[RMDB]
RNA sequence: GGGAACGACUCGAGUAGAGUCGAAAAGAGUCCUAUUUCGAUAGGACUCAACUAAAAUCAGCGGUAAAUAAUUACCUGGCGUUACCGCUGAACGCCAGCAUACUAGCCUCGUCUUCGGACGAGGCAAUGCAUACGUUAACUUCGGUUAACGUAUGCAAAAAGAAACAACAACAACAAC
Reactivity to DMS in 0.01 (KOAc 150mM, MgCl2 10mM, bicine 150mM(pH8.5), 24C), signal-to-noise 2, nucleotides 027 to 126: g000a020g000u000c000c010u010a000u000u000u020c130g010a010u000a000g000g010a000c000u000c000a010a130c110u010a120a040a120a150u000c010a010g000c000g000g020u020a050a000a050u000a020a040u000u020a090c180c040u000g010g010c030g000u010u000a110c010c010g020c010u010g000a010a010c010g010c010c000a030g000c300a080u010a040c110u000a140g000c010c000u000c000g000u000c000u000u000c180g030g000a010c010g000a000g000g020c000a010a010
Reactivity to 2A3 in 0.01 (KOAc 150mM, MgCl2 10mM, bicine 150mM(pH8.5), 24C), signal-to-noise 2, nucleotides 027 to 126: g000a000g000u030c000c000u000a010u010u100u070c260g060a010u010a000g000g050a000c000u000c000a000a020c000u080a020a000a050a130u020c010a020g080c000g120g260u280a010a110a100u110a040a090u170u160a150c050c010u010g000g000c010g000u000u030a100c020c000g000c000u010g000a000a000c020g010c000c020a000g040c040a070u130a140c050u080a100g000c010c000u000c000g010u000c020u030u050c220g090g000a000c000g010a000g030g000c010a000a000

The data come from the RNA Mapping Database (RMDB), library M2PK50. An RNA of 177 nucleotides, treated with DMS and 2A3 and read out base by base. The RNA was probed in 150 mM KOAc, 10 mM MgCl2 and 150 mM bicine (pH 8.5) at 24 C. Values are in units of 0.01, from 0 to 300, in steps of 10. The DMS profile rests on 1,681 reads.